[RMDB]
RNA sequence: GGGAACGACUCGAGUAGAGUCGAAAAUCUAUGGUCUUCGGACCAUAGAAAAUAAGAAUCGGAAGCAUGAGAACCGAGACAAACAUGCUAACGCGAAAGCGAAAACAAUCCAGUUCGCUGGAUUGAACACUACGUUAAUGUUCGCAUUAACGUAGUGAAAAGAAACAACAACAACAAC
Reactivity to 2A3 in 0.01 (KOAc 150mM, MgCl2 10mM, bicine 150mM(pH8.5), 24C), signal-to-noise 6, nucleotides 027 to 126: u000c000u000a000u000g000g020u000c000u010u060c250g080g010a000c000c000a000u000a000g000a000a000a000a000u120a020a020g100a040a090u060c000g000g000a050a040g000c000a010u010g010a030g060a110a010c010c020g020a040g040a100c140a020a030a000c000a000u010g000c020u070a160a030c020g000c010g060a110a020a020g010c010g040a040a020a010a030c010a000a000u000c000c000a000g020u050u060c170g070c050u010g000g000a010u000u000g000a010a000
Reactivity to DMS in 0.01 (KOAc 150mM, MgCl2 10mM, bicine 150mM(pH8.5), 24C), signal-to-noise 6, nucleotides 027 to 126: u000c000u000a000u000g000g010u000c000u000u010c200g040g010a010c000c000a010u010a010g000a010a020a080a080u010a080a120g010a130a170u000c000g000g000a200a060g000c010a000u010g000a180g010a070a030c000c020g000a090g010a110c250a020a020a090c010a000u000g010c010u000a100a200c020g010c010g000a070a090a110g020c010g010a050a070a060a210c010a010a010u010c000c000a020g010u000u010c270g030c010u000g000g000a000u000u000g000a070a130
Description
Chemical mapping of a 177-nucleotide RNA with 2A3 and DMS. DMS adducts were read by reverse transcription with MarathonRT. The RNA was probed in 150 mM KOAc, 10 mM MgCl2 and 150 mM bicine (pH 8.5) at 24 C. In probing experiments dimethyl sulfate is read out at A N1 and C N3, which are open when not base-paired. Reactivities are given for positions 27 through 126. The DMS profile rests on 6,936 reads. The data come from the RNA Mapping Database (RMDB), library M2PK50.